[RMDB]
RNA sequence: GGGAACGACUCGAGUAGAGUCGAAAACUGCUUAACUUCGGUUAAGCAGAAAGUGAUCAAAGCCGAAACACACCGGCAAGUGACCGGCAGCACAAGCCGAAAAAACGGAUGACUUCGGUCAUCCGAACAUUUCAACUGUCUUCGGACAGUUGAAAUGAAAAGAAACAACAACAACAAC
Reactivity to DMS in 0.01 (KOAc 150mM, MgCl2 10mM, bicine 150mM(pH8.5), 24C), signal-to-noise 2, nucleotides 027 to 126: c000u000g000c000u000u000a000a010c000u010u020c180g020g030u010u000a020a000g000c010a000g000a030a040a140g020u020g000a110u000c080a050a050a170g010c020c000g000a090a100a120c080a070c120a120c150c040g040g000c050a040a140g000u000g000a070c150c030g000g020c010a100g020c080a020c110a060a240g000c020c030g040a010a060a050a060a070a200c030g000g000a010u000g010a030c000u000u010c140g020g000u000c000a000u000c000c010g000a050a060
Reactivity to 2A3 in 0.01 (KOAc 150mM, MgCl2 10mM, bicine 150mM(pH8.5), 24C), signal-to-noise 2, nucleotides 027 to 126: c000u000g000c000u020u010a000a000c000u040u070c080g090g000u010u010a000a000g000c000a000g010a010a000a000g070u060g040a130u090c070a060a080a030g020c010c010g080a070a090a020c120a030c020a060c130c010g000g000c050a010a030g000u000g050a060c010c010g020g000c010a030g070c030a070c000a130a040g000c010c030g080a080a070a020a020a010a000c000g020g000a000u000g010a000c030u000u040c230g060g010u030c000a000u000c010c000g000a010a000
Description: Chemical mapping of a 177-nucleotide RNA with DMS and 2A3. For 2A3 the reverse transcriptase was SuperScript II with manganese. The reactions ran in a buffer of 150 mM KOAc, 10 mM MgCl2 and 150 mM bicine (pH 8.5), at 24 C. For DMS the reverse transcriptase was MarathonRT. It was measured as part of the RMDB library M2PK50. Reactivities are given for positions 27 through 126. The 2A3 profile rests on 2,414 reads.